[RMDB]
Structure probing data (DMS and 2A3) for a 207-nucleotide construct. For 2A3 the reverse transcriptase was SuperScript II with manganese. The DMS profile rests on 3,793 reads. For DMS the reverse transcriptase was MarathonRT. Reactivities are given for positions 27 through 156. Source: RMDB library M2RFOK, as collected in RNAgym.
RNA sequence: GGGAACGACUCGAGUAGAGUCGAAAAUCAGAAUCAGGCCGGAGUGUUUAGCGCUCCGUAAACACGGUCGUACAUCCAGCCGGUAGCCUGGUUCCUUGCAUCGAGUGAUGUACGGAGUUUAUAGAGCAAAAGAAAGACCUGUUCGCAGGUCUUUCAAUCUAAUAGUGGAGUUCGCUCCACUAUUAGAAAAAGAAACAACAACAACAAC
Reactivity to DMS in 0.01 (KOAc 150mM, MgCl2 10mM, bicine 150mM(pH8.5), 24C), signal-to-noise 2, nucleotides 027 to 156: u000c050a060g020a060a020u010c010a010g030g010c020c030g030g010a100g030u000g020u000u000u000a160g010c100g000c000u000c010c000g020u000a030a060a100c040a110c040g000g010u000c040g000u000a080c030a060u000c010c040a210g030c040c000g010g040u010a070g020c040c010u000g010g020u000u000c000c020u020u010g000c080a110u010c080g000a160g030u000g010a030u000g000u000a070c020g010g020a140g000u010u000u000a100u010a120g000a120g010c040a100a050a090a160g020a020a030a020g010a010c000c010u010g040u000u000c300g030c010a010g020g010u000c010u010u020u000c000a040a110
Reactivity to 2A3 in 0.01 (KOAc 150mM, MgCl2 10mM, bicine 150mM(pH8.5), 24C), signal-to-noise 3, nucleotides 027 to 156: u090c010a010g010a000a020u010c010a010g000g010c010c040g010g000a020g010u050g070u090u200u250a120g080c010g050c010u000c000c010g000u030a010a020a000c110a000c060g050g030u060c000g020u040a020c010a060u000c030c020a010g020c020c020g020g020u020a010g000c000c020u020g000g000u000u000c010c010u070u150g020c010a050u070c060g120a100g140u190g060a010u010g010u010a020c030g040g000a060g030u090u210u010a190u070a040g080a020g050c040a020a060a100a010g000a010a000a000g000a000c010c010u030g030u040u110c300g000c060a000g000g000u000c000u000u000u000c000a000a000